This 207-nucleotide RNA was probed chemically with DMS and 2A3.
For 2A3, 3,712 sequencing reads were counted.
For DMS the reverse transcriptase was MarathonRT.
2A3 adducts were read by reverse transcription with SuperScript II with manganese.
[RMDB]
RNA sequence: GGGAACGACUCGAGUAGAGUCGAAAAGGCGACGAGCAACUUGUCGUAGGGGAUCUCCUCGCCCUCGUGGGUGUUGACGACCUUCGCAUCGGUGUCGACGCUCGUUACGAAGGUGUUCAGCGAGAGGUCGAUGUCACGUUCGUCGUACCACUCCUCGCUCAAAAGAGUCUUUCGAGACUCUUUUGAGAAAAGAAACAACAACAACAAC
Reactivity to DMS in 0.01 (KOAc 150mM, MgCl2 10mM, bicine 150mM(pH8.5), 24C), signal-to-noise 1, nucleotides 027 to 156: g040g000c010g020a060c000g000a050g040c040a120a160c070u000u010g040u020c040g010u000a070g020g000g050g010a220u000c030u000c000c020u000c000g000c090c010c010u020c050g060u000g020g030g040u010g010u000u000g010a050c030g000a130c010c000u000u010c080g030c140a110u000c090g000g040u000g020u020c030g000a050c050g000c000u010c040g060u030u000a040c060g010a050a080g010g030u010g050u000u010c060a080g000c080g000a090g010a070g010g040u000c000g020a100u020g020u000c060a130c220g000u010u000c020g040u010c000g000u000a120c010c000a080c050u000c010c020u000c050g000
Reactivity to 2A3 in 0.01 (KOAc 150mM, MgCl2 10mM, bicine 150mM(pH8.5), 24C), signal-to-noise 5, nucleotides 027 to 156: g040g010c000g000a000c000g010a000g010c060a040a110c060u120u140g060u130c040g040u100a060g010g050g040g080a070u030c020u040c050c010u010c020g010c020c010c000u070c090g050u220g000g010g000u020g030u020u020g000a010c090g070a060c020c000u130u170c130g040c100a140u150c120g010g010u010g010u020c010g000a000c010g010c010u010c000g040u110u100a050c050g030a080a060g090g060u170g100u130u200c070a020g010c000g030a020g000a000g000g050u020c020g030a050u070g040u100c020a010c180g000u010u000c010g010u000c000g010u050a280c010c020a050c020u040c010c010u070c040g020